Background:
The record gives the reactivity of an RNA of 177 nucleotides to DMS and 2A3. The RNA was probed in 150 mM KOAc, 10 mM MgCl2 and 150 mM bicine (pH 8.5) at 24 C. Source: RMDB library RFM100, as collected in RNAgym.
[RMDB]
RNA sequence: GGGAACGACUCGAGUAGAGUCGAAAAAGAAGGUGAGGCAGUUUUGCCCCGUGCUGCCUUCCACCGGUUAAGACCUCCAAAAUCGAAGGGCUGCCCAGGCAGAGGAUGUCCCCUUGCCACCCUUGGAAUAACUCGCUAGGUUCGCCUAGCGAGUUAUAAAAGAAACAACAACAACAAC
Reactivity to DMS in 0.01 (KOAc 150mM, MgCl2 10mM, bicine 150mM(pH8.5), 24C), signal-to-noise 2, nucleotides 027 to 126: a080g010a060a100g040g000u010g000a030g000g000c000a030g000u000u020u030u000g040c040c010c000c030g000u000g000c000u000g000c000c000u030u000c190c000a010c010c000g040g010u020u030a060a100g000a140c080c020u010c010c030a050a070a080a100u000c090g000a060a060g030g010g020c080u010g000c040c020c020a060g000g000c080a060g020a090g020g010a100u040g000u030c030c000c010c040u000u010g010c040c020a090c000c030c030u000u010g010g000a180
Reactivity to 2A3 in 0.01 (KOAc 150mM, MgCl2 10mM, bicine 150mM(pH8.5), 24C), signal-to-noise 2, nucleotides 027 to 126: a000g200a050a010g030g010u040g030a020g000g010c010a010g000u050u090u220u180g100c000c000c000c000g000u020g000c000u000g030c000c000u000u040c030c000a020c020c020g010g000u070u020a150a030g040a150c000c020u000c050c050a010a030a040a150u110c060g050a060a040g020g000g000c000u020g020c010c000c030a050g000g090c020a020g020a090g100g010a000u030g110u110c030c000c020c010u000u040g000c000c000a070c000c010c020u020u030g040g000a050